Structure probing data (DMS and 2A3) for a 207-nucleotide construct. DMS adducts were read by reverse transcription with MarathonRT. The RNA was probed in 150 mM KOAc, 10 mM MgCl2 and 150 mM bicine (pH 8.5) at 24 C. Reactivities are given for positions 27 through 156.
RNA sequence: GGGAACGACUCGAGUAGAGUCGAAAACGGCAAAAAAGCAAACUUGACCACCAAGGAUAAAAGAGAUCUUAUCCAAGGAUGCAAAAGAUAAUCUCACUUUUGACACCCACUGAUCUCGACCUUAAAGAAAACCGAGACUACUUCGGUAGUCUCGGAAUCCAACAGUCAAGUUCGCUUGACUGUUGGAAAAAGAAACAACAACAACAAC
Reactivity to DMS in 0.01 (KOAc 150mM, MgCl2 10mM, bicine 150mM(pH8.5), 24C), signal-to-noise 2, nucleotides 027 to 156: c090g020g060c030a000a020a030a100a110a060g030c030a070a120a060c050u000u000g010a180c110c040a070c010c010a010a210g020g000a200u000a020a030a110a120g000a080g040a030u000c020u010u000a070u000c120c080a050a260g020g050a040u010g010c000a040a020a020a040g000a050u010a070a120u010c120u000c130a180c010u000u000u020u020g020a200c030a030c000c000c020a180c210u000g030a050u000c000u000c020g010a110c070c000u000u000a110a070a120g010a070a010a100a080c040c000g000a020g010a020c010u000a000c000u000u020c300g050g000u010a010g040u000c000u000c000g000g000a010a000
Reactivity to 2A3 in 0.01 (KOAc 150mM, MgCl2 10mM, bicine 150mM(pH8.5), 24C), signal-to-noise 3, nucleotides 027 to 156: c020g020g020c030a040a010a010a060a070a040g020c050a100a060a120c030u100u080g030a140c030c020a020c020c030a090a020g010g010a080u150a180a090a030a020g010a000g010a000u020c030u060u090a060u120c080c050a050a060g010g010a020u030g000c000a000a030a030a010g000a060u100a200a210u130c100u040c080a030c010u020u020u040u000g100a090c020a020c010c010c000a010c040u010g010a000u000c000u000c010g030a030c010c000u080u080a040a130a070g080a000a060a010a040c000c000g000a000g000a000c000u010a000c000u030u050c130g030g000u000a010g000u000c000u000c000g000g000a000a000